An RNA of 177 nucleotides, treated with DMS and read out base by base. In probing experiments dimethyl sulfate is read out at A N1 and C N3, which are open when not base-paired. It was measured as part of the RMDB library OK2TST. DMS adducts were read by reverse transcription with MarathonRT. The RNA was probed in 150 mM KOAc, 10 mM MgCl2 and 150 mM bicine (pH 8.5) at 24 C.

RNA sequence: GGGAACGACUCGAGUAGAGUCGAAAACCGAGCCCUACUACCACCUGGACGGCCCGGUGCAGUCCACCGCGAAGGUGCUGGAGAAGGCCGGCAUGAAGAUCGGCGACAUCGACAUCGUCGAGAUCAACUGAGUGGACCAGUUCGCUGGUCCACUCAGAAAAGAAACAACAACAACAAC
Reactivity to DMS in 0.01 (KOAc 150mM, MgCl2 10mM, bicine 150mM(pH8.5), 24C), signal-to-noise 1, nucleotides 027 to 126: c030c020g030a060g000c040c000c000u000a080c000u020a170c300c000a010c030c070u010g000g030a300c080g000g000c060c140c160g040g000u000g010c220a170g010u000c000c050a120c010c000g070c030g000a220a060g010g030u010g000c200u020g010g000a130g000a210a060g050g010c000c000g000g020c060a170u000g000a100a090g000a100u000c030g000g000c010g070a060c060a160u030c220g070a210c110a090u000c050g000u000c030g000a010g000a160u000c040a040a200